[RMDB]
RNA sequence: GGGAACGACUCGAGUAGAGUCGAAAACGCCACUUCACCAAGGGGUGCUGAAGAAACAAAUGCGAGCGGCGUCACCACAUGACUGUGCAAAUAACCAAAACUGCACGAGGACCGACGCAACCUGCUGUGCCUACUCCCAUUUCGAUGGGAGUAGGCAAAAAGAAACAACAACAACAAC
Reactivity to 2A3 in 0.01 (KOAc 150mM, MgCl2 10mM, bicine 150mM(pH8.5), 24C), signal-to-noise 2, nucleotides 027 to 126: c100g030c000c000a060c000u020u100c080a030c100c010a100a140g050g000g020g000u230g000c120u100g060a170a030g030a100a110a000c080a020a180a010u100g000c040g070a050g030c000g000g000c000g030u000c020a060c030c000a080c030a020u160g060a120c070u160g010u010g000c000a000a070a090u050a130a070c010c000a120a010a000a100c030u070g000c040a000c000g080a090g010g010a130c070c050g040a000c030g000c040a010a010c000c000u120g020c060u120g000
Reactivity to DMS in 0.01 (KOAc 150mM, MgCl2 10mM, bicine 150mM(pH8.5), 24C), signal-to-noise 2, nucleotides 027 to 126: c160g020c000c000a070c040u000u070c060a030c070c060a290a020g020g000g000g060u000g000c030u000g010a080a030g000a130a010a040c080a050a120a060u070g000c030g000a130g000c300g070g000c030g000u000c000a040c050c030a030c110a050u030g000a100c160u060g040u010g000c000a030a060a070u000a180a200c110c090a100a000a090a290c300u000g000c000a000c000g000a110g000g000a230c000c230g030a000c090g020c000a030a120c020c060u000g040c060u030g000

An RNA of 177 nucleotides, treated with 2A3 and DMS and read out base by base. The RNA was probed in 150 mM KOAc, 10 mM MgCl2 and 150 mM bicine (pH 8.5) at 24 C.